RNA sequence: GGGAACGACUCGAGUAGAGUCGAAAAAAACUUUUGUGACUUGCUGAAACGGGACUAAUCUCCUCACCGAGGCUAAGCAAGCAAAAUACGCCUCUCAUAUCCUUACCUGAGGGUGGUAAGGAAAUAACCUGCAACGCUUCCUUCGGGAAGCGUUGAAUCUGACAGCUAGAUUCGUCUAGCUGUCAGAAAAAGAAACAACAACAACAAC
Reactivity to 2A3 in 0.01 (KOAc 150mM, MgCl2 10mM, bicine 150mM(pH8.5), 24C), signal-to-noise 1, nucleotides 027 to 156: a000a000a000c170u200u060u050u050g100u120g020a140c000u020u060g000c040u100g020a040a000a140c060g000g000g000a010c020u050a120a140u030c060u040c090c000u100c040a050c030c020g020a020g060g020c040u040a010a000g020c040a000a010g010c000a010a000a070a070u100a020c070g000c010c000u000c000u010c000a020u000a080u250c000c000u000u020a040c010c000u040g080a110g020g020g000u030g000g000u000a000a000g000g000a030a000a020u020a010a020c030c100u120g000c010a000a000c000g000c010u000u010c000c000u020u120c140g030g000g000a000a010g000c000g000u000u000g000a000a010